[RMDB]
RNA sequence: GGGAACGACUCGAGUAGAGUCGAAAAUGAAGUGAAAUUGGAAUUUCGCUAGGUUUGCUUAGUAGCUAGUACAAGUGUCGUGCUGCUCCAGGGUUCUUGGUGUGGGUUCCGUCUCACACUUCACACCGACUGACUACCAGUUCGCUGGUAGUCAGUCAAAAGAAACAACAACAACAAC
Reactivity to DMS in 0.01 (KOAc 150mM, MgCl2 10mM, bicine 150mM(pH8.5), 24C), signal-to-noise 1, nucleotides 027 to 126: u000g000a130a060g000u000g010a040a050a030u000u030g020g000a090a100u000u000u010c050g020c040u020a070g000g000u000u010u020g010c030u000u000a090g040u010a030g020c030u010a020g030u010a020c070a110a100g040u030g030u000c170g000u010g030c060u000g000c000u000c060c100a060g010g000g010u000u000c060u010u000g010g020u020g000u010g010g020g010u000u000c100c120g010u010c070u020c120a070c050a020c050u000u000c020a020c190a090c080c030
Reactivity to 2A3 in 0.01 (KOAc 150mM, MgCl2 10mM, bicine 150mM(pH8.5), 24C), signal-to-noise 1, nucleotides 027 to 126: u030g000a020a010g010u050g040a000a060a090u130u190g070g060a020a050u000u020u040c020g000c020u000a020g040g120u030u070u060g200c000u030u050a030g000u030a000g120c070u010a010g010u010a030c020a120a120g100u030g120u290c050g020u000g000c010u000g010c000u050c040c050a040g040g010g000u030u070c000u020u100g020g000u000g010u090g040g000g000u070u100c020c000g120u000c000u010c000a060c010a020c000u060u090c020a040c000a010c000c050
Conditions: 150 mM KOAc, 10 mM MgCl2 and 150 mM bicine (pH 8.5), 24 C. Structure probing data (DMS and 2A3) for a 177-nucleotide construct. 2A3 adducts were read by reverse transcription with SuperScript II with manganese. It was measured as part of the RMDB library RFMREP. The DMS profile rests on 843 reads.